[RMDB]
RNA sequence: GGGAACGACUCGAGUAGAGUCGAAAAUCAUUGCCAGCUCUGUUCAUUUUCUUCCCUGGUCUAACUCAAUAAUUGCCAUCAUGAAAAUUCUGGGUGACUUUUGUGACUAAAGUCCCAUUGUAAGCCAAUAUAUGCUACAUUUCGAUGUAGCAUAUAUAAAAGAAACAACAACAACAAC
Reactivity to 2A3 in 0.01 (KOAc 150mM, MgCl2 10mM, bicine 150mM(pH8.5), 24C), signal-to-noise 9, nucleotides 027 to 126: u070c010a030u020u110g040c000c010a010g010c010u020c030u070g090u100u060c040a060u070u090u080u040c030u030u050c010c000c000u010g030g000u000c030u040a060a040c010u020c090a050a090u100a160a100u110u090g020c030c010a060u080c020a030u120g120a060a090a050a060u110u040c040u070g040g000g020u050g020a030c000u040u030u050u070g100u080g050a040c050u090a030a040a040g020u010c010c000c000a020u020u060g040u060a070a020g020c020c010a020
Reactivity to DMS in 0.01 (KOAc 150mM, MgCl2 10mM, bicine 150mM(pH8.5), 24C), signal-to-noise 9, nucleotides 027 to 126: u020c060a080u010u010g010c030c020a060g000c030u010c030u000g010u000u010c060a070u010u000u010u010c070u000u010c020c010c000u000g010g010u010c030u010a070a080c080u000c060a060a070u010a060a090u010u010g010c060c030a060u010c060a060u000g000a070a090a080a090u010u010c060u010g010g010g020u010g010a050c050u000u000u000u000g010u010g000a080c100u000a040a050a080g010u000c000c010c010a130u010u010g010u000a050a120g010c100c050a070

Source: RMDB libraries RFM100 and RFMREP, as collected in RNAgym. Chemical mapping of a 177-nucleotide RNA with 2A3 and DMS. For 2A3 the reverse transcriptase was SuperScript II with manganese. The RNA was probed in 150 mM KOAc, 10 mM MgCl2 and 150 mM bicine (pH 8.5) at 24 C.